RNA sequence: GGGAACGACUCGAGUAGAGUCGAAAACAGGGUUGAAUUCCUCGAUUUGAGGCUAUACUAUGUGGGGUCUGACCUAUAUAAGUGGCGUUGAGAAUUGGGUCCCACGCAACGGAAACUCAUGAAACCCGUCAGGUCCGGAAGGAAGCAGCGGUAAGUGGAAGUAGUAGUUGUUCGCAACUACUACUUCAAAAGAAACAACAACAACAAC
Reactivity to DMS in 0.01 (KOAc 150mM, MgCl2 10mM, bicine 150mM(pH8.5), 24C), signal-to-noise 2, nucleotides 027 to 156: c030a090g010g060g000u000u000g010a140a190u000u020c030c020u000c030g020a210u000u000u020g030a250g000g020c120u020a180u000a140c080u000a060u000g010u000g020g030g060g020u010c080u040g010a160c030c000u000a080u000a130u000a080a130g050u000g030g070c060g020u000u010g010a220g020a050a110u000u000g020g010g000u010c000c000c000a050c070g000c030a070a110c010g000g000a070a030a060c030u000c050a070u010g000a120a110a160c080c000c010g040u010c050a200g000g030u000c010c030g050g010a130a070g030g030a070a160g000c020a100g020c030g030g040u010a020a060g010u000g010
Reactivity to 2A3 in 0.01 (KOAc 150mM, MgCl2 10mM, bicine 150mM(pH8.5), 24C), signal-to-noise 3, nucleotides 027 to 156: c040a020g080g020g000u080u070g120a110a100u090u080c000c020u040c060g210a300u010u040u200g040a020g000g020c030u070a020u050a180c030u040a030u240g030u060g000g000g000g000u050c080u110g040a080c010c020u060a060u000a010u020a200a090g050u050g070g020c080g020u070u120g070a070g030a110a080u100u100g020g020g010u010c030c010c010a000c040g000c010a010a060c030g010g070a100a040a010c020u020c020a010u150g070a050a030a020c000c000c000g040u060c010a010g020g000u010c000c010g000g060a040a030g050g000a070a000g000c010a000g000c010g020g030u070a120a050g090u080g140